[RMDB]
RNA sequence: GGGAACGACUCGAGUAGAGUCGAAAACAUCCCUGAGUUGCUCGUGCGUACGAUCCGUUUUCUUUGAGUCGCGUUGUUUGGGAAUGCAGCGCAAAGUAGGUGGUAAAUUCCAUCUAAAGCUAAAUAUUAGUACGAUUACAUUCGUGUAAUCGUACUAAAAAGAAACAACAACAACAAC
Reactivity to 2A3 in 0.01 (KOAc 150mM, MgCl2 10mM, bicine 150mM(pH8.5), 24C), signal-to-noise 5, nucleotides 027 to 126: c030a090u050c000c000c020u040g060a090g030u020u030g030c020u020c090g070u070g070c040g010u060a050c050g030a090u010c020c040g030u010u030u050u090c060u030u070u150g130a090g060u100c040g030c020g010u010u020g050u010u020u070g160g040g010a030a020u020g000c010a000g010c000g000c000a000a020a060g110u070a010g000g000u010g030g000u040a120a220a170u160u030c000c000a010u000c000u030a100a020a030g020c010u050a040a070a080u210a150u060
Reactivity to DMS in 0.01 (KOAc 150mM, MgCl2 10mM, bicine 150mM(pH8.5), 24C), signal-to-noise 3, nucleotides 027 to 126: c250a150u010c010c000c020u000g030a110g000u000u000g000c060u000c050g030u010g020c050g030u010a070c100g020a060u010c050c050g030u000u030u010u000c040u010u020u010g000a090g000u010c060g000c060g000u010u000g020u000u030u030g000g020g000a100a080u010g030c060a070g000c040g000c060a080a080a110g010u010a030g000g010u000g000g000u000a060a090a220u030u040c000c010a010u000c000u020a040a090a120g000c080u010a040a110a080u010a110u000

This 177-nucleotide RNA was probed chemically with 2A3 and DMS. 2A3 adducts were read by reverse transcription with SuperScript II with manganese.